Chemical mapping of a 177-nucleotide RNA with 2A3 and DMS. It was measured as part of the RMDB library OK2TST. 2A3 adducts were read by reverse transcription with SuperScript II with manganese. The reactions ran in a buffer of 150 mM KOAc, 10 mM MgCl2 and 150 mM bicine (pH 8.5), at 24 C.
RNA sequence: GGGAACGACUCGAGUAGAGUCGAAAACUCCAAACUCAGACAUUGGAUGGAGAGUAGAAUUUCGACCCAUGGAGGUAAGACACAUGCAUCAGCAAGAACUGACUCAAAAGUACUCUUUCGCCAGCUGUGACAUGUACUCGUUCGCGAGUACAUGUCAAAAAGAAACAACAACAACAAC
Reactivity to 2A3 in 0.01 (KOAc 150mM, MgCl2 10mM, bicine 150mM(pH8.5), 24C), signal-to-noise 2, nucleotides 027 to 126: c020u010c000c000a040a010a110c080u070c070a040g090a200c040a170u090u170g090g040a060u040g000g060a060g010a010g060u070a060g040a160a160u120u100u080c070g010a040c000c020c010a040u070g080g070a060g060g000u030a080a010g040a010c030a010c010a150u090g010c000a050u040c050a060g040c020a090a040g000a090a070c010u020g000a020c010u020c090a020a060a050a050g050u030a040c000u020c000u050u070u000c040g020c040c020a020g060c040u070g030
Reactivity to DMS in 0.01 (KOAc 150mM, MgCl2 10mM, bicine 150mM(pH8.5), 24C), signal-to-noise 2, nucleotides 027 to 126: c050u020c000c040a060a190a170c090u000c130a050g000a210c070a080u010u000g000g000a200u000g000g010a040g000a080g010u000a030g010a110a060u000u000u000c120g010a090c070c010c030a050u000g000g000a110g020g040u000a050a050g000a090c130a060c110a080u000g000c050a070u000c040a050g000c050a030a030g000a100a160c050u000g000a060c100u000c090a020a040a080a150g000u020a050c070u000c020u000u000u000c050g040c080c020a050g020c150u010g010